Overview:
This 177-nucleotide RNA was probed chemically with 2A3. For 2A3, 385 sequencing reads were counted.
[RMDB]
RNA sequence: GGGAACGACUCGAGUAGAGUCGAAAAUUGCCUCACAUAUGGGCUUCGCGGUUUGGCAUACUUUCAAGUGGAGGUGGAAUGCUCCAGCAAAGACUUGCAUAGUGGAGUUUUUGGGGGUACAGUUCACCGUAGCUCGUCGAUUCGUCGACGAGCUACGAAAAGAAACAACAACAACAAC
Reactivity to 2A3 in 0.01 (KOAc 150mM, MgCl2 10mM, bicine 150mM(pH8.5), 24C), signal-to-noise 1, nucleotides 027 to 126: u190u010g000c000c000u140c020a070c000a110u110a130u210g000g000g000c000u000u000c000g010c000g000g210u160u000u160g080g000c100a060u100a020c120u000u080u100c040a210a000g010u000g000g060a000g210g070u040g000g020a050a050u110g000c000u000c000c020a050g100c010a000a000a000g020a170c070u050u000g000c000a100u190a090g280u060g000g000a000g010u050u050u000u000u000g000g000g000g000g080u000a070c110a100g000u040u050c020a000c170